Annotation
Structure probing data (2A3 and DMS) for a 177-nucleotide construct. For DMS, 3,138 sequencing reads were counted. It was measured as part of the RMDB library TTRDEL. The reactions ran in a buffer of 150 mM KOAc, 10 mM MgCl2 and 150 mM bicine (pH 8.5), at 24 C.
[RMDB]
RNA sequence: GGGAACGACUCGAGUAGAGUCGAAAAGAUAUGGAGUGAACUACACUUGAAGAGGCGUUGAAAUCGGAAACGAUGGAGCCUUGGAGGAGUGCACUCCUAAGUCAAAACCCGAAGUUCGCUUCGGGAACCUAUGGAGAUACUUCGGUAUCUCCAUAGGAAAAGAAACAACAACAACAAC
Reactivity to 2A3 in 0.01 (KOAc 150mM, MgCl2 10mM, bicine 150mM(pH8.5), 24C), signal-to-noise 4, nucleotides 027 to 126: g010a020u060a040u160g000g010a000g010u010g010a060a010c050u250a070c300a020c030u070u060g010a090a040g000a020g020g000c030g210u300u090g050a080a090a010u010c020g000g040a030a060a050c020g010a000u020g030g040a020g010c000c000u000u010g010g030a050g180g090a000g000u010g010c000a010c000u000c000c000u010a130a020g050u010c020a030a050a140a260c000c010c000g000a010a000g020u070u300c300g020c180u010u000c000g000g020g000a020a030
Reactivity to DMS in 0.01 (KOAc 150mM, MgCl2 10mM, bicine 150mM(pH8.5), 24C), signal-to-noise 3, nucleotides 027 to 126: g010a040u000a300u000g020g010a030g020u000g000a060a030c070u040a290c020a070c030u000u000g010a300a230g000a010g010g020c000g000u000u000g000a110a120a010u000c000g000g000a090a070a160c010g000a010u000g000g000a140g020c000c000u000u000g000g000a190g000g000a020g010u000g000c000a010c000u000c000c000u000a020a070g010u000c000a080a060a220a130c000c000c000g010a010a010g020u000u000c230g020c000u000u000c000g010g000g000a030a040